[RMDB]
RNA sequence: GGGAACGACUCGAGUAGAGUCGAAAAUAUGCCUAGGUUUUUUCUCAGGGAUUGGUAUGGGGACAAAUGACCCUUUCCAUCUCUACUAAUCCUUCAGCUCUCUUAGAAUCUACAAAUAGGAACAGUAAAAAACAAGAUCUAGAGAUCUAGUUAGUAAUCCAUUUAGCAUAUUCGUAUGCUAAAUGGAAAAAGAAACAACAACAACAAC
Reactivity to DMS in 0.01 (KOAc 150mM, MgCl2 10mM, bicine 150mM(pH8.5), 24C), signal-to-noise 1, nucleotides 027 to 156: u020a050u000g030c020c050u000a090g060g010u020u030u000u010u020u000c040u030c050a120g010g030g020a080u000u000g020g000u000a070u000g000g000g010g010a220c100a030a170a140u000g010a200c020c010c010u000u040u000c040c020a070u000c050u010c030u000a070c020u000a010a020u010c010c010u000u000c030a090g020c030u000c010u010c040u000u000a090g020a120a080u000c020u000a200c050a020a050a140u010a070g010g010a060a130c060a130g050u060a010a060a090a040a030a080c050a080a100g000a040u000c020u020a080g020a140g010a010u000c000u000a060g020u010u000a050g000u020a070a290
Reactivity to 2A3 in 0.01 (KOAc 150mM, MgCl2 10mM, bicine 150mM(pH8.5), 24C), signal-to-noise 3, nucleotides 027 to 156: u180a080u120g070c020c000u050a060g030g080u000u020u000u020u080u020c050u030c070a010g020g010g010a050u100u180g030g030u130a080u130g010g000g000g020a080c130a070a200a070u210g120a080c000c000c000u000u060u000c000c000a010u000c000u000c000u000a020c000u000a000a050u090c030c010u050u090c050a030g000c010u000c000u010c010u070u060a010g060a140a060u070c010u070a090c100a080a190a160u180a160g120g010a110a030c050a090g160u280a100a140a060a070a000a010c070a070a030g000a020u010c000u010a010g010a010g000a060u020c000u000a020g020u010u010a000g000u000a070a090
Chemical mapping of a 207-nucleotide RNA with DMS and 2A3. The RNA was probed in 150 mM KOAc, 10 mM MgCl2 and 150 mM bicine (pH 8.5) at 24 C. For DMS, 2,255 sequencing reads were counted. For DMS the reverse transcriptase was MarathonRT. Values cover nucleotides 27 to 156. 2A3 adducts were read by reverse transcription with SuperScript II with manganese. Source: RMDB library OK3TST, as collected in RNAgym.